Overview:
Chemical mapping of a 207-nucleotide RNA with DMS and 2A3. The 2A3 profile rests on 988 reads. DMS adducts were read by reverse transcription with MarathonRT. The RNA was probed in 150 mM KOAc, 10 mM MgCl2 and 150 mM bicine (pH 8.5) at 24 C.
RNA sequence: GGGAACGACUCGAGUAGAGUCGAAAAGUUUACGGCUUCCUCAUGAAGGAUAACCUGCUUGCAAACUCACAACAACAGAACAAACAAUUACAAAUGCUUAGAUUCGGUAUGCUCGCAGGGCUCAGCAGACUUGUUUGUCCAGGUGAGCUUGGAAAGACAUUGCCUAUUCCUUCGGGAAUAGGCAAUGAAAAGAAACAACAACAACAAC
Reactivity to DMS in 0.01 (KOAc 150mM, MgCl2 10mM, bicine 150mM(pH8.5), 24C), signal-to-noise 1, nucleotides 027 to 156: g020u000u000u000a080c040g000g100c030u000u000c000c050u000c030a170u040g000a280a100g000g030a040u000a020a050c000c040u010g000c100u000u020g010c000a110a090a090c010u040c010a060c030a070a170c050a120a170c060a090g000a110a140c040a050a050a160c040a030a090u010u010a230c130a120a050a100u000g020c010u000u000a070g030a300u000u010c030g010g040u010a090u000g020c000u010c120g010c050a130g020g000g040c050u000c030a070g000c010a110g040a100c240u010u000g020u020u000u020g000u010c040c040a210g100g010u000g000a000g040c020u030u000g000g000a060a030a160g020a110
Reactivity to 2A3 in 0.01 (KOAc 150mM, MgCl2 10mM, bicine 150mM(pH8.5), 24C), signal-to-noise 2, nucleotides 027 to 156: g060u100u160u120a030c030g010g010c020u020u040c000c000u010c060a130u210g070a070a040g010g000a010u040a040a000c000c000u040g020c010u050u050g000c040a010a020a050c010u020c050a060c010a110a210c000a130a040c020a090g050a060a000c030a050a060a000c040a010a060u140u090a200c090a080a120a050u140g000c020u040u040a010g010a070u180u060c040g040g000u060a030u180g050c000u010c070g020c020a030g040g020g000c000u030c040a010g020c010a010g020a100c030u050u040g050u020u120u050g010u000c020c000a020g000g000u020g000a020g000c000u010u050g030g030a050a030a020g050a010